RNA sequence: GGGAACGACUCGAGUAGAGUCGAAAAAAGGGAAUAAACUAUUUCCAGAUGGUGUUAGCUUUGCCUAGGGAAGGAAGUACUCUUUCCUAGACUGAAAACUAAAAUGCAAUGCUGAGUUACCUCUCCAAAACAAGGAACUGAAAUAUUAGGCUUAGCAGGUAAUAGCCACUUUCGAGUGGCUAUUACCAAAAGAAACAACAACAACAAC
Reactivity to 2A3 in 0.01 (KOAc 150mM, MgCl2 10mM, bicine 150mM(pH8.5), 24C), signal-to-noise 1, nucleotides 027 to 156: a000a000g090g010g020a070a040u160a100a120a110c030u080a120u010u020u000c050c100a010g000a070u030g000g080u080g030u100u040a010g000c070u030u030u100g000c000c000u000a000g080g000g000a000a020g020g010a120a060g110u090a100c030u000c000u070u000u000c010c000u000a010g010a010c050u060g080a010a000a030a090c020u100a140a010a050a050u070g020c000a000a000u030g020c000u070g000a010g040u070u140a100c000c000u020c060u010c060c040a000a050a080a080c010a000a020g010g040a040a010c050u070g020a010a000a010u240a090u250u170a040g050g020c010u070u100a020g060c050a020